Source information
Structure probing data (2A3 and DMS) for a 177-nucleotide construct. For 2A3 the reverse transcriptase was SuperScript II with manganese. For DMS the reverse transcriptase was MarathonRT. The data come from the RNA Mapping Database (RMDB), library OK2TRN. Conditions: 150 mM KOAc, 10 mM MgCl2 and 150 mM bicine (pH 8.5), 24 C. The 2A3 profile rests on 1,684 reads.
[RMDB]
RNA sequence: GGGAACGACUCGAGUAGAGUCGAAAAGGAGGUUGAGGACCUCUGGGCUGAGUAUGAGGAAGCUGCUGCAAGGGAGGCAGCUGAGGCGUCUGAGGCCUCAAAUGGACAUGCCACAUCUGAGGUGGCAGGCAGCAGCUAUUUUCGAAUAGCUGCUGCCAAAAGAAACAACAACAACAAC
Reactivity to 2A3 in 0.01 (KOAc 150mM, MgCl2 10mM, bicine 150mM(pH8.5), 24C), signal-to-noise 1, nucleotides 027 to 126: g050g010a010g080g050u030u060g070a050g030g110a230c000c000u040c020u010g030g040g000c030u020g050a000g090u220a080u120g090a060g080g050a040a000g000c010u020g000c010u010g040c070a140a130g140g010g000a020g000g010c010a000g000c040u020g000a000g040g000c010g030u050c040u060g040a050g060g020c000c000u000c010a070a090a000u130g010g040a060c060a090u030g000c020c000a030c010a060u100c110u200g110a090g010g150u000g000g010c000a000
Reactivity to DMS in 0.01 (KOAc 150mM, MgCl2 10mM, bicine 150mM(pH8.5), 24C), signal-to-noise 2, nucleotides 027 to 126: g020g000a070g020g000u000u010g010a130g030g020a220c000c000u000c000u000g000g000g000c050u000g000a170g000u020a040u020g010a080g020g000a280a060g000c000u000g000c000u000g020c050a100a110g000g000g040a300g000g000c000a020g010c000u000g000a260g020g010c050g030u000c110u010g000a120g000g000c020c010u000c050a050a060a090u010g010g000a190c120a120u000g010c020c020a020c010a090u000c110u000g000a160g000g020u000g000g000c020a040

For DMS, 1,162 sequencing reads were counted.